[RMDB]
RNA sequence: GGGAACGACUCGAGUAGAGUCGAAAAGAAGGAGGUGCCAAGUAGCCCCGUUGCGGAGAGUGUGUCAGCCCCAUCGCAGUGCACCUCACUGCCCUCCCGCUUCCCCGGCCACUUGGCACUCACUACCAGACGUAGAUCCUUUCGAGGAUCUACGUCUAAAAGAAACAACAACAACAAC
Reactivity to DMS in 0.01 (KOAc 150mM, MgCl2 10mM, bicine 150mM(pH8.5), 24C), signal-to-noise 1, nucleotides 027 to 126: g100a130a070g000g000a240g000g000u000g100c010c000a000a000g000u020a090g000c000c030c080c300g000u000u000g000c020g000g010a050g000a020g000u060g030u000g020u040c040a100g000c060c020c010c020a060u020c130g010c000a000g100u000g020c260a170c160c080u000c000a060c020u010g000c000c030c010u000c020c020c000g000c090u020u000c020c110c050c210g000g000c000c000a000c000u010u000g000g000c000a000c010u020c020a030c060u000a130c020c030
Reactivity to 2A3 in 0.01 (KOAc 150mM, MgCl2 10mM, bicine 150mM(pH8.5), 24C), signal-to-noise 3, nucleotides 027 to 126: g190a040a060g100g050a030g020g070u040g000c000c010a000a010g010u010a000g020c000c020c020c040g020u010u020g000c010g010g010a110g000a020g270u120g000u030g100u260c090a060g050c010c030c000c010a040u090c070g000c030a010g000u030g050c080a070c060c050u060c000a000c020u010g000c000c000c000u010c030c000c000g000c000u010u020c060c040c020c000g000g000c000c000a010c010u000u010g000g000c000a000c000u000c000a040c000u030a030c010c020